[RMDB]
RNA sequence: GGGAACGACUCGAGUAGAGUCGAAAAGAAGAUUUAAUAAUGACGAUACAAGAAAAAGAACAUCUAUUAAGUCCGUUAUUUAAAGAUUGGCAUAAGUAUAAUACUGAUAAAAGUUUACAUCAGCUCAGUCUAUCAUGUGGUUCGCCACAUGAUAGACAAAAGAAACAACAACAACAAC
Reactivity to DMS in 0.01 (KOAc 150mM, MgCl2 10mM, bicine 150mM(pH8.5), 24C), signal-to-noise 1, nucleotides 027 to 126: g000a260a150g010a000u000u000u000a000a010u000a000a000u000g010a070c100g000a160u000a040c050a090a240g000a110a010a100a070a020g000a170a080c130a010u000c200u000a070u010u000a010a020g000u000c030c000g060u100u000a020u000u050u000a040a170a070g000a110u010u000g000g000c020a210u000a080a050g010u000a040u000a020a080u000a060c010u000g010a050u000a030a120a180a160g000u000u040u070a030c060a000u000c120a060g010c020u050c190a190
Reactivity to 2A3 in 0.01 (KOAc 150mM, MgCl2 10mM, bicine 150mM(pH8.5), 24C), signal-to-noise 2, nucleotides 027 to 126: g130a080a000g070a000u040u210u040a020a000u030a200a000u000g010a000c050g140a010u080a220c210a010a120g080a080a120a240a000a000g070a110a060c000a100u000c050u140a030u130u000a080a000g000u010c000c000g010u050u000a190u050u170u110a040a020a020g140a020u050u180g000g000c080a090u110a190a010g140u120a100u040a300a020u210a040c010u050g000a020u110a260a140a000a000g000u000u020u050a030c020a000u000c000a000g010c060u030c060a000

An RNA of 177 nucleotides, treated with DMS and 2A3 and read out base by base.
The data come from the RNA Mapping Database (RMDB), library OK1LIB.
The 2A3 profile rests on 939 reads.
The DMS profile rests on 1,180 reads.
2A3 adducts were read by reverse transcription with SuperScript II with manganese.
Conditions: 150 mM KOAc, 10 mM MgCl2 and 150 mM bicine (pH 8.5), 24 C.
Reactivities are rounded to 0.1 and cut off at 0 and 3.
For DMS the reverse transcriptase was MarathonRT.